[RMDB]
RNA sequence: GGGAACGACUCGAGUAGAGUCGAAAAAGAGCACCACGUAUGUGCCAAGCUCUCUUCGAGGUGCUGGGACUACUUUUGUGUGUGGAAAAGACCAACAAGAUGAAAGAUGAUGUUGGCCUAGGCCAGGGUGGAGGCACUGUUUUCAAGAACAGGAGUGUGUUGCGUAUACUUUCGAGUAUACGCAACAAAAAGAAACAACAACAACAAC
Reactivity to DMS in 0.01 (KOAc 150mM, MgCl2 10mM, bicine 150mM(pH8.5), 24C), signal-to-noise 2, nucleotides 027 to 156: a080g000a180g000c010a170c050c010a040c090g000u000a080u020g060u000g030c050c030a070a130g010c040u000c010u010c030u000u000c100g010a080g020g030u000g040c000u000g010g040g000a040c030u000a010c060u000u010u010u000g040u000g030u010g000u000g010g000a070a070a090a110g010a050c010c020a040a040c020a070a090g010a170u000g010a110a100a110g010a200u000g010a160u000g000u000u020g040g000c020c010u000a030g050g000c030c060a090g030g000g000u000g020g010a150g030g000c050a090c030u010g000u000u000u000u000c160a080a130g000a020a050c030a040g020g010a140g010u010g030
Reactivity to 2A3 in 0.01 (KOAc 150mM, MgCl2 10mM, bicine 150mM(pH8.5), 24C), signal-to-noise 3, nucleotides 027 to 156: a000g090a010g000c010a020c060c000a070c050g080u090a040u300g040u020g090c010c030a070a020g020c020u000c010u000c040u200u140c130g030a060g020g000u090g020c020u040g010g040g010a010c010u040a020c010u120u070u160u110g090u010g020u010g010u060g030g020a070a070a040a000g030a010c040c010a010a020c050a000a050g130a090u170g090a200a130a020g070a060u120g010a020u050g060u030u030g020g000c020c040u090a120g030g020c020c020a030g000g030g000u050g010g010a030g000g020c010a000c050u010g000u010u020u040u180c090a060a040g080a080a030c010a030g100g030a080g070u120g000

An RNA of 207 nucleotides, treated with DMS and 2A3 and read out base by base. The reactions ran in a buffer of 150 mM KOAc, 10 mM MgCl2 and 150 mM bicine (pH 8.5), at 24 C. For 2A3 the reverse transcriptase was SuperScript II with manganese.